[RMDB]
RNA sequence: GGGAACGACUCGAGUAGAGUCGAAAAUGUAAAUCAUGUUGCUCUCUGGGUCUGUUUCCCAAUCUGUAGAGUGUAAAAGUCUCUGAGGCUCCUUGCAGAGACAAGUGAUGGAACGACCUUGACAGAAGAGAGCAGAGAGAGGAAAGAAGGGGGAGGAUCUAAGUCACCUUUUCGAAGGUGACUUAGAAAAAGAAACAACAACAACAAC
Reactivity to DMS in 0.01 (KOAc 150mM, MgCl2 10mM, bicine 150mM(pH8.5), 24C), signal-to-noise 1, nucleotides 027 to 156: u000g000u000a070a090a120u000c050a080u030g020u010u040g010c000u010c020u000c000u010g000g040g010u010c020u010g030u000u000u000c010c010c020a070a070u020c020u020g010u000a070g000a020g030u000g030u020a060a080a210a250g010u010c010u000c020u080g000a160g020g040c020u000c020c020u000u020g000c020a050g000a070g000a090c040a080a070g010u010g010a150u000g000g000a110a060c070g010a050c010c000u000u010g000a200c080a050g000a140a110g030a090g000a000g020c030a030g160a090g000a120g020a170g000g000a090a060a130g000a070a030g010g000g020g010g010a090g040g010a200
Reactivity to 2A3 in 0.01 (KOAc 150mM, MgCl2 10mM, bicine 150mM(pH8.5), 24C), signal-to-noise 2, nucleotides 027 to 156: u110g030u050a060a090a060u210c040a050u130g060u080u100g030c000u000c020u000c020u030g000g040g010u010c040u120g020u030u070u030c000c010c000a030a040u000c000u030g060u120a020g020a080g110u150g060u150a110a100a090a090g000u020c010u010c040u030g020a060g090g030c030u050c030c020u100u050g010c000a010g000a030g020a020c020a050a010g010u020g030a090u110g000g030a030a010c020g000a000c030c000u040u070g120a090c050a070g040a080a000g010a020g000a010g030c040a000g000a000g000a000g000a010g000g010a040a040a050g020a010a050g040g000g030g000g010a020g030g020a050
Conditions: 150 mM KOAc, 10 mM MgCl2 and 150 mM bicine (pH 8.5), 24 C. An RNA of 207 nucleotides, treated with DMS and 2A3 and read out base by base. The 2A3 profile rests on 1,199 reads. In probing experiments dimethyl sulfate is read out at A N1 and C N3, which are open when not base-paired. For DMS, 2,052 sequencing reads were counted. It was measured as part of the RMDB library OK3TST. 2A3 adducts were read by reverse transcription with SuperScript II with manganese. Values cover nucleotides 27 to 156.